[RMDB]
RNA sequence: GGGAACGACUCGAGUAGAGUCGAAAAAUCCUCAGGUUCAUAAGCGUGAUGAUUGGGUGUUCAUGCUCCAUGCAUGACAUGUGCCUCCCUUGAACCUUGUUACGACCUUGGCACAUUACCCAUCUGAAAAAGACGUUCGCGUUCGCGCGAACGUCAACGUAAGCAUGAAGUUCGCUUCAUGCUUACGAAAAGAAACAACAACAACAAC
Reactivity to 2A3 in 0.01 (KOAc 150mM, MgCl2 10mM, bicine 150mM(pH8.5), 24C), signal-to-noise 5, nucleotides 027 to 156: a010u030c000c000u020c020a000g000g000u000u000c010a010u080a220a090g070c140g150u140g110a090u050g010a030u130u250g000g010g000u070g020u100u030c000a000u000g000c010u090c200c100a110u300g000c010a000u000g000a000c000a020u010g000u000g000c000c000u030c020c000c000u000u010g010a000a000c000c000u010u090g100u060u110a100c100g040a110c030c060u060u070g000g000c000a000c000a010u010u170a010c010c000c010a000u000c010u050g100a080a060a050a050a050g000a000c000g000u000u000c000g010c000g010u040u040c210g000c010g000c010g080a000a000c000g000u000c000a000a000
Reactivity to DMS in 0.01 (KOAc 150mM, MgCl2 10mM, bicine 150mM(pH8.5), 24C), signal-to-noise 2, nucleotides 027 to 156: a100u000c010c000u000c040a040g010g030u000u000c000a090u010a100a120g020c080g040u010g000a140u000g010a070u010u010g050g020g020u010g010u000u000c010a010u000g000c020u000c160c250a180u010g000c010a050u010g010a020c260a250u000g010u000g020c010c000u000c050c010c030u000u020g000a020a030c010c000u030u000g030u030u000a140c090g010a070c060c060u010u000g010g050c010a030c020a090u000u010a100c020c000c010a050u010c040u050g000a080a090a130a150a150g010a040c000g060u000u000c000g010c010g030u000u000c300g020c030g030c010g000a000a000c000g010u000c000a010a060

This 207-nucleotide RNA was probed chemically with 2A3 and DMS. For 2A3, 4,223 sequencing reads were counted. Conditions: 150 mM KOAc, 10 mM MgCl2 and 150 mM bicine (pH 8.5), 24 C. Reactivities are given for positions 27 through 156. For DMS the reverse transcriptase was MarathonRT.